Chemical mapping of a 207-nucleotide RNA with DMS and 2A3. Source: RMDB library RNAMAK, as collected in RNAgym. The RNA was probed in 150 mM KOAc, 10 mM MgCl2 and 150 mM bicine (pH 8.5) at 24 C. For DMS the reverse transcriptase was MarathonRT.

RNA sequence: GGGAACGACUCGAGUAGAGUCGAAAACGGAGUGGUUCGCCACUCCGAAAAAACCGUAGGACGAUGACAGACAUGCUCCCAGGCCUUCGAAAGAGGGUAGGGAGCAACAGCUGUCUGUCGUCCUAAACGGAAAAACGUAACUCUUCGGAGUUACGAACUCGAAGAUAUUGUUCGCAAUAUCUUCGAGAAAAGAAACAACAACAACAAC
Reactivity to DMS in 0.01 (KOAc 150mM, MgCl2 10mM, bicine 150mM(pH8.5), 24C), signal-to-noise 1, nucleotides 027 to 156: c000g010g010a040g070u000g010g000u000u030c210g050c010c000a010c030u020c000c000g010a000a010a060a050a060a090c010c000g080u010a040g020g000a030c000g000a040u000g030a000c000a030g020a050c030a300u000g000c000u010c010c000c010a120g020g000c020c000u000u000c020g010a180a030a230g020a020g020g010g050u000a180g020g010g030a000g000c010a000a020c090a110g030c020u000g000u000c010u000g050u000c000g020u000c000c000u000a000a040a070c110g000g000a040a030a060a100a140c010g020u000a000a010c000u010c010u000u010c300g000g030a010g000u000u000a000c010g000a020a040
Reactivity to 2A3 in 0.01 (KOAc 150mM, MgCl2 10mM, bicine 150mM(pH8.5), 24C), signal-to-noise 2, nucleotides 027 to 156: c000g000g000a000g000u030g040g030u100u150c280g090c070c000a000c010u020c000c010g000a000a000a000a000a000a060c010c000g010u020a000g000g000a000c000g020a010u030g000a000c000a000g050a040c020a110u030g000c000u040c000c000c000a070g300g000c030c010u000u010c010g050a090a050a040g010a010g000g000g000u000a020g030g010g000a010g000c000a000a000c000a000g000c010u000g000u000c040u000g010u000c000g000u000c000c000u010a030a060a000c000g010g030a050a060a050a010a000c010g000u000a000a000c010u000c010u070u110c300g110g000a000g000u000u000a000c000g000a010a000